[RMDB]
RNA sequence: GGGAACGACUCGAGUAGAGUCGAAAAUGUUUGAAUUGAUGAAGAACUUGUUAUUGCAUACAGAUGCUGUCGGUAUAUGUAGCACAUACUUAGCCACGAACAUGAGUGAGUGGAGGCGUGUGUGUGACGCUAACUAGCGAUUCGUCGCUAGUUAGCGAAAAGAAACAACAACAACAAC
Reactivity to 2A3 in 0.01 (KOAc 150mM, MgCl2 10mM, bicine 150mM(pH8.5), 24C), signal-to-noise 2, nucleotides 027 to 126: u140g030u010u010u100g130a110a020u060u110g070a100u170g030a060a070g030a170a080c020u020u010g150u060u050a030u010u060g090c000a000u020a130c060a150g090a060u000g180c120u090g030u070c070g000g000u150a090u000a030u210g010u050a000g000c000a050c000a000u000a050c000u000u140a040g040c000c000a000c060g050a070a050c100a200u300g030a050g240u000g030a000g000u020g000g030a030g000g040c040g010u000g030u000g000u000g030u000g000a000
Reactivity to DMS in 0.01 (KOAc 150mM, MgCl2 10mM, bicine 150mM(pH8.5), 24C), signal-to-noise 2, nucleotides 027 to 126: u030g020u000u060u020g030a010a110u030u010g080a080u000g010a130a240g000a130a170c130u020u000g000u040u000a040u020u030g010c080a120u000a080c040a040g010a090u010g000c000u040g050u000c040g000g000u050a110u000a090u020g020u050a140g000c000a010c000a000u000a000c000u010u040a220g040c030c000a010c000g020a130a050c050a070u070g010a100g040u000g010a290g000u000g000g000a010g010g010c300g010u040g000u000g030u000g010u000g000a120
Annotation
The record gives the reactivity of an RNA of 177 nucleotides to 2A3 and DMS. It was measured as part of the RMDB library OK1LIB. For DMS, 1,487 sequencing reads were counted. For DMS the reverse transcriptase was MarathonRT.